[RMDB]
RNA sequence: GGGAACGACUCGAGUAGAGUCGAAAAUUGCACACCAUAUCGCCGCCGACGGCUGGUCGGUGGCUCCGCUGACGGCCGAUCUGAGUGCGGCAUAUGCCAGCCGUUGUGCGGGUCGGGCACCGGACUGAGAAGUUCUGGUAUUCGUACCAGAACUUCUAAAAGAAACAACAACAACAAC
Reactivity to DMS in 0.01 (KOAc 150mM, MgCl2 10mM, bicine 150mM(pH8.5), 24C), signal-to-noise 1, nucleotides 027 to 126: u030u030g000c050a000c100a090c100c030a000u000a020u000c150g030c000c000g030c000c030g010a020c030g010g010c030u000g010g050u000c080g000g070u000g000g020c040u000c010c040g020c080u020g000a070c070g000g000c030c000g000a040u020c090u040g000a100g000u060g000c050g010g000c060a030u000a000u020g000c070c020a120g040c000c060g020u000u000g000u040g000c060g010g020g020u000c000g000g000g040c050a090c050c000g000g000a150c080u000g020
Reactivity to 2A3 in 0.01 (KOAc 150mM, MgCl2 10mM, bicine 150mM(pH8.5), 24C), signal-to-noise 4, nucleotides 027 to 126: u120u160g020c070a060c010a040c080c020a070u080a060u140c090g020c010c000g010c010c020g040a050c030g110g110c090u100g150g030u010c040g000g030u010g030g000c000u010c000c020g030c020u060g020a050c050g040g010c010c050g060a100u050c060u140g070a020g070u180g020c000g010g000c000a050u070a020u150g080c030c030a000g000c000c000g050u060u080g120u120g050c000g000g030g000u000c020g000g020g000c030a080c020c010g040g030a050c030u060g060

An RNA of 177 nucleotides, treated with DMS and 2A3 and read out base by base. The DMS profile rests on 2,618 reads. Reactivities are given for positions 27 through 126.